[RMDB]
RNA sequence: GGGAACGACUCGAGUAGAGUCGAAAAGGAGGCGUUCAAAGGUUCCCUCAAAAUGGUCAGAAAUCAUUUUUAGAGCGUAAAGGUAUAAGGGAGCUUGACUGUGAGACCUACAAGUCGAGCAGGGACGACCCUUCGACACUUUCGAGUGUCGAAGGGUAAAAGAAACAACAACAACAAC
Reactivity to DMS in 0.01 (KOAc 150mM, MgCl2 10mM, bicine 150mM(pH8.5), 24C), signal-to-noise 1, nucleotides 027 to 126: g050g000a080g020g010c130g000u010u010c050a090a180a040g000g010u000u000c010c000c000u000c120a060a000a090a000u000g040g060u000c110a220g050a110a140a000u000c000a010u000u000u000u000u000a280g000a120g020c080g000u000a140a090a050g000g050u010a090u000a110a130g000g000g010a180g020c010u000u000g000a140c000u000g000u000g000a300g000a050c040c050u000a080c300a090a180g000u000c000g000a260g000c060a060g000g000g060a190c190g000

Chemical mapping of a 177-nucleotide RNA with DMS. For DMS the reverse transcriptase was MarathonRT. The RNA was probed in 150 mM KOAc, 10 mM MgCl2 and 150 mM bicine (pH 8.5) at 24 C.